[RMDB]
RNA sequence: GGGAACGACUCGAGUAGAGUCGAAAACGUUGCAGUACAAAUAGGGCCCCACGCGGGUCAGGUGCCCGUGCGAGUAAGCGCUGAUCUCGGGUUGCUGCGGACCGUGUCCGCGUACUAGCAGCCAUGCUGGUGCUUUAAUGUUCGCAUUAAAGCACCAAAAAGAAACAACAACAACAAC
Reactivity to DMS in 0.01 (KOAc 150mM, MgCl2 10mM, bicine 150mM(pH8.5), 24C), signal-to-noise 4, nucleotides 027 to 126: c130g010u000u010g000c010a040g000u000a050c070a080a120a130u010a150g000g030g000c030c010c000c040a110c180g030c090g000g000g020u000c040a020g010g010u000g010c010c010c040g010u000g030c050g000a110g020u000a070a100g020c030g010c060u000g000a100u020c060u000c050g010g000g000u000u010g020c030u000g030c000g000g000a010c010c290g010u010g010u000c010c020g010c030g010u000a030c110u020a070g010c010a000g010c000c070a060u000g010c200
Reactivity to 2A3 in 0.01 (KOAc 150mM, MgCl2 10mM, bicine 150mM(pH8.5), 24C), signal-to-noise 2, nucleotides 027 to 126: c040g070u050u080g020c010a010g000u030a030c040a060a250a140u150a220g110g000g000c020c030c040c030a080c150g060c110g000g000g020u000c020a020g000g040u060g000c000c000c000g030u040g000c020g010a030g060u130a110a060g060c020g050c070u090g070a160u030c030u050c080g090g000g000u040u240g030c020u020g010c000g000g010a040c120c140g180u110g040u200c000c000g000c030g000u040a030c030u040a020g000c000a000g020c030c000a010u080g010c020